Structure probing data (2A3 and DMS) for a 177-nucleotide construct. 2A3 adducts were read by reverse transcription with SuperScript II with manganese. It was measured as part of the RMDB library OK1LIB.
RNA sequence: GGGAACGACUCGAGUAGAGUCGAAAAGCACGCCGGAGGGGCCACGUGCGAACACUUGAGCGGCAGACCCUGAGCUCUUGUGGAUUAGGACGUUCUACGACAGGGGGUCUACGUAGUUCGUCCGAAAGGCAUGGAUCUGGUUCGCCAGGUCCAUGCCAAAAGAAACAACAACAACAAC
Reactivity to 2A3 in 0.01 (KOAc 150mM, MgCl2 10mM, bicine 150mM(pH8.5), 24C), signal-to-noise 4, nucleotides 027 to 126: g020c010a000c050g000c020c000g020g050a030g050g010g020g010c040c000a050c030g050u050g010c060g020a090a010c010a010c040u040u050g020a010g010c010g090g000c070a020g020a190c020c000c010u070g040a020g020c000u000c000u020u040g030u030g030g050a120u090u180a070g000g000a010c000g000u000u000c000u000a010c000g090a030c070a160g000g030g010g020g020u020c030u000a030c030g000u000a000g000u000u000c000g010u000c000c010g010a020a020a000
Reactivity to DMS in 0.01 (KOAc 150mM, MgCl2 10mM, bicine 150mM(pH8.5), 24C), signal-to-noise 2, nucleotides 027 to 126: g040c050a000c040g000c050c060g020g030a040g010g000g000g040c070c050a210c010g020u000g020c050g000a070a080c090a090c050u020u020g020a030g000c040g020g020c010a110g000a140c030c040c030u070g020a170g000c030u030c030u030u000g000u000g000g000a110u030u000a060g040g020a030c010g060u000u000c010u000a020c000g020a070c130a070g010g000g000g030g010u000c010u000a120c010g000u030a000g000u010u000c000g030u010c000c020g000a110a070a070